[RMDB]
Structure probing data (2A3 and DMS) for a 177-nucleotide construct.
The 2A3 profile rests on 1,433 reads.
The RNA was probed in 150 mM KOAc, 10 mM MgCl2 and 150 mM bicine (pH 8.5) at 24 C.
RNA sequence: GGGAACGACUCGAGUAGAGUCGAAAAGUCAGGCCUGGCCUGUGGCUCCUGACCGUAUCGAGGUUAUAGGCGAUCCGCAGCUGGCGCUGGCCAGAGAGAUUGCCCUUUACAAUAAAGAGGACUAAACUGUCCUUUGCUUUUUCGAAAGCAAAGGACAAAAAGAAACAACAACAACAAC
Reactivity to 2A3 in 0.01 (KOAc 150mM, MgCl2 10mM, bicine 150mM(pH8.5), 24C), signal-to-noise 3, nucleotides 027 to 126: g000u010c010a000g020g050c040c040u040g120g010c020c040u020g020u040g030g000c020u010c020c020u020g040a040c010c020g010u090a170u300c090g050a130g000g070u150u120a150u190a190g030g000c000g000a100u070c000c000g040c010a020g030c000u000g000g000c070g060c220u080g040g000c000c010a000g000a000g000a000g010a120u040u140g010c000c000c010u000u080u040a090c100a090a100u250a150a080a080g170a080g140g020a030c060u140a120a050a000c090
Reactivity to DMS in 0.01 (KOAc 150mM, MgCl2 10mM, bicine 150mM(pH8.5), 24C), signal-to-noise 2, nucleotides 027 to 126: g010u050c030a000g000g000c300c010u050g000g020c170c050u020g030u040g000g020c050u010c050c000u040g000a030c030c000g040u000a110u030c180g000a110g000g030u010u010a080u030a040g000g010c020g040a140u030c020c000g020c060a070g000c060u000g000g000c000g000c070u000g000g000c000c000a030g010a090g000a150g010a040u060u000g000c000c000c010u000u030u000a120c250a120a110u010a110a060a100g000a080g000g040a030c100u020a040a130a220c170
The data come from the RNA Mapping Database (RMDB), library OK1LIB.